This 177-nucleotide RNA was probed chemically with 2A3 and DMS. Source: RMDB library OK1LIB, as collected in RNAgym. Values are in units of 0.01, from 0 to 300, in steps of 10. The DMS profile rests on 2,983 reads. Values cover nucleotides 27 to 126. 2A3 adducts were read by reverse transcription with SuperScript II with manganese. Conditions: 150 mM KOAc, 10 mM MgCl2 and 150 mM bicine (pH 8.5), 24 C.
RNA sequence: GGGAACGACUCGAGUAGAGUCGAAAAGAAGACGUGACGAAAAGUCACGAAAAAUAAUAAAGGCUAAUCGUCAAAGCCGGGCACUGCCCAUAAAGACGACAAACGUGGUAGAGAUACCACGAAAAGACUCCGUCAUAUGAUUCGUCAUAUGACGGAGAAAAGAAACAACAACAACAAC
Reactivity to 2A3 in 0.01 (KOAc 150mM, MgCl2 10mM, bicine 150mM(pH8.5), 24C), signal-to-noise 6, nucleotides 027 to 126: g110a060a010g090a040c010g000u000g000a000c020g070a100a100a100a140g000u000c000a000c000g030a010a000a000a000a000u260a030a020u110a070a120a000g000g000c000u010a070a040u030c000g000u000c030a130a080a010g000c020c060g040g000g000c300a300c280u290g000c010c000c000a000u040a030a060a010g000a000c020g000a010c040a010a100a000c010g000u010g000g000u000a000g010a010g010a080u000a010c000c000a000c000g020a010a010a000a000g050a010
Reactivity to DMS in 0.01 (KOAc 150mM, MgCl2 10mM, bicine 150mM(pH8.5), 24C), signal-to-noise 2, nucleotides 027 to 126: g010a190a090g000a150c000g020u000g000a010c000g020a180a110a050a240g000u000c000a000c000g000a070a060a070a130a040u020a070a140u040a180a150a130g040g000c000u000a010a050u000c000g000u000c010a050a040a050g010c020c030g020g000g000c010a090c230u000g000c000c000c000a020u020a000a150a140g010a000c020g020a070c190a060a110a070c010g000u000g010g000u010a020g030a120g000a230u000a010c010c000a030c020g000a040a040a130a070g000a160